[RMDB]
RNA sequence: GGGAACGACUCGAGUAGAGUCGAAAAGGCCGACAGUGAGAAAUCAUCGUGUUAGUCGAAGUGGUCUGGAACGGCCUGUCGUAGAGGGUGAGAGUCCCGUAGACGAAAACAUGGUGACUGUCGUGACACAUUCGUAAAGAUUCGUCUUUACGAAUGUAAAAGAAACAACAACAACAAC
Reactivity to DMS in 0.01 (KOAc 150mM, MgCl2 10mM, bicine 150mM(pH8.5), 24C), signal-to-noise 9, nucleotides 027 to 126: g010g010c070c000g000a010c010a010g010u010g010a160g010a090a110a120u060c000a010u000c020g040u000g010u000u000a260g000u000c000g000a020a020g000u030g000g010u000c000u000g000g050a300a030c020g000g000c010c000u000g000u000c010g020u010a010g010a300g000g000g000u000g010a140g000a110g000u000c000c000c000g000u000a300g000a010c010g010a100a100a070a010c010a010u000g000g020u000g000a030c000u000g000u000c000g000u020g010a110c140
Reactivity to 2A3 in 0.01 (KOAc 150mM, MgCl2 10mM, bicine 150mM(pH8.5), 24C), signal-to-noise 9, nucleotides 027 to 126: g070g020c020c000g000a000c000a010g040u130g160a180g210a080a100a080u070c000a000u000c000g000u000g020u020u030a050g010u000c000g000a010a000g030u060g070g000u000c000u010g000g010a010a010c000g000g000c000c000u000g000u000c000g000u010a010g000a010g060g000g000u020g000a000g000a000g010u000c010c000c000g000u000a000g000a020c000g010a110a130a010a010c000a000u020g000g000u000g010a010c000u000g000u000c010g010u030g040a010c010
This 177-nucleotide RNA was probed chemically with DMS and 2A3. Values are in units of 0.01, from 0 to 300, in steps of 10. DMS adducts were read by reverse transcription with MarathonRT. Conditions: 150 mM KOAc, 10 mM MgCl2 and 150 mM bicine (pH 8.5), 24 C.